Chemical mapping of a 177-nucleotide RNA with DMS and 2A3. The reactions ran in a buffer of 150 mM KOAc, 10 mM MgCl2 and 150 mM bicine (pH 8.5), at 24 C. The DMS profile rests on 4,282 reads. The data come from the RNA Mapping Database (RMDB), library OK2TRN. Values cover nucleotides 27 to 126.
RNA sequence: GGGAACGACUCGAGUAGAGUCGAAAACUAGCCCACGCACGGUUGUCGUGAUCGGGGCGACGGUGACGUUCGUGAGGUGCGGACGUACGACCUCGCGGGUAAGGAUCAGGACGGGUCUAGCCUUGUCCCGUCAAUCCUUGUUCGCAAGGAUUGACGGAAAAGAAACAACAACAACAAC
Reactivity to DMS in 0.01 (KOAc 150mM, MgCl2 10mM, bicine 150mM(pH8.5), 24C), signal-to-noise 3, nucleotides 027 to 126: c040u000a140g000c000c000c010a190c070g020c030a050c000g010g010u000u010g020u000c000g030u010g000a090u010c050g000g000g010g030c030g000a070c220g010g020u020g010a040c010g000u000u000c000g020u010g010a130g020g000u000g010c020g010g010a050c050g030u000a050c050g000a100c020c010u000c060g010c020g000g010g010u000a020a030g010g000a040u010c170a150g000g000a020c040g010g000g000u010c100u010a150g010c070c090u000u000g000u000c010
Reactivity to 2A3 in 0.01 (KOAc 150mM, MgCl2 10mM, bicine 150mM(pH8.5), 24C), signal-to-noise 2, nucleotides 027 to 126: c020u020a060g020c000c030c020a120c050g000c010a010c040g040g110u270u210g110u300c000g100u030g040a180u160c040g000g000g010g060c020g000a030c080g070g070u130g050a030c000g000u000u020c020g000u040g160a190g040g250u300g100c010g010g010a020c020g000u100a080c010g010a050c010c020u020c010g010c000g000g000g020u030a040a030g020g000a010u070c080a060g150g000a000c000g010g000g050u000c070u080a050g140c030c060u080u140g040u010c000